[RMDB]
RNA sequence: GGGAACGACUCGAGUAGAGUCGAAAAAAUAUGUAGCACUUGACCCAAAAAUGGUGUCCAUUUUUAUGGAAAAGGCAAGAGAAGGACUAGGAGGUGAGGAAGUUCAACUAUGGUUUACUGCCUUCUCUGCAAAUUUAACACCUACUGACAUGGCCACGAGAUAUAUAGGUUUCGACCUAUAUAUCUCAAAAGAAACAACAACAACAAC
Reactivity to 2A3 in 0.01 (KOAc 150mM, MgCl2 10mM, bicine 150mM(pH8.5), 24C), signal-to-noise 3, nucleotides 027 to 156: a000a000u230a050u100g030u050a010g030c030a030c050u050u080g060a080c020c000c010a010a050a060a060a070u120g010g000u030g030u060c020c000a020u070u090u060u120u160a030u050g020g020a020a050a060a080g090g000c050a090a020g000a000g020a020a000g010g010a010c020u050a030g040g060a020g080g000u050g040a030g040g040a090a020g020u120u080c030a050a020c010u090a060u160g040g050u030u060u100a070c020u060g000c000c000u000u020c000u000c020u010g000c010a000a000a110u140u130u020a030a010c010a010c010c000u040a030c020u030g020a010c010a070u040g050g000c000c090a060c030
Reactivity to DMS in 0.01 (KOAc 150mM, MgCl2 10mM, bicine 150mM(pH8.5), 24C), signal-to-noise 2, nucleotides 027 to 156: a060a090u000a030u000g000u000a100g000c050a030c030u000u000g000a230c010c000c060a040a030a080a140a070u010g030g010u000g020u010c010c000a060u000u000u000u000u000a120u010g000g000a030a130a080a090g000g070c040a080a030g010a060g000a080a080g010g040a090c060u010a070g000g020a120g030g030u000g020a040g020g030a080a090g040u000u000c040a060a050c020u020a120u000g020g000u000u000u000a080c030u010g020c020c000u000u000c010u000c010u000g000c040a050a050a070u000u000u000a080a080c000a050c030c000u000a120c050u000g010a070c090a180u010g000g010c030c000a090c230